This 177-nucleotide RNA was probed chemically with DMS and 2A3. The reactions ran in a buffer of 150 mM KOAc, 10 mM MgCl2 and 150 mM bicine (pH 8.5), at 24 C. Source: RMDB library M2PK90, as collected in RNAgym. The 2A3 profile rests on 1,182 reads. The DMS profile rests on 1,601 reads.

[RMDB]
RNA sequence: GGGAACGACUCGAGUAGAGUCGAAAAAAGUUGCACCAGGUACGGAUACCAGACGUUGCCAAACAGGCUGACAUGAGGAUCACCCAUGUACUGUCCCUUGGCAGCCGUACCUGGUGCUGGUGAAAAAGAAGCAUUGAUUGUUCGCAAUCAAUGCUUCAAAAGAAACAACAACAACAAC
Reactivity to DMS in 0.01 (KOAc 150mM, MgCl2 10mM, bicine 150mM(pH8.5), 24C), signal-to-noise 2, nucleotides 027 to 126: a030a050g010u000u000g030c000a000c000c000a020g000g000u000a010c020g010g000a150u000a120c130c040a080g010a120c240g020u000u000g000c000c000a000a050a090c250a120g010g000c010u000g000a060c020a000u000g010a090g000g010a200u020c300a080c060c010c010a030u000g000u010a110c030u000g000u010c020c010c090u020u000g020g020c030a050g020c020c010g010u000a000c020c010u010g000g010u000g000c000u000g020g020u000g000a040a090a050a070a080
Reactivity to 2A3 in 0.01 (KOAc 150mM, MgCl2 10mM, bicine 150mM(pH8.5), 24C), signal-to-noise 1, nucleotides 027 to 126: a020a030g220u110u030g000c000a000c010c000a010g000g000u010a000c020g000g000a070u050a210c040c060a010g050a190c080g130u120u020g040c000c000a030a080a050c110a070g010g000c000u000g030a030c000a010u080g040a180g090g020a080u200c080a290c080c000c000a000u010g010u040a300c020u000g090u150c030c000c000u030u000g030g000c000a000g000c020c000g020u000a000c000c010u000g030g000u000g000c000u000g010g020u080g000a070a030a020a050a030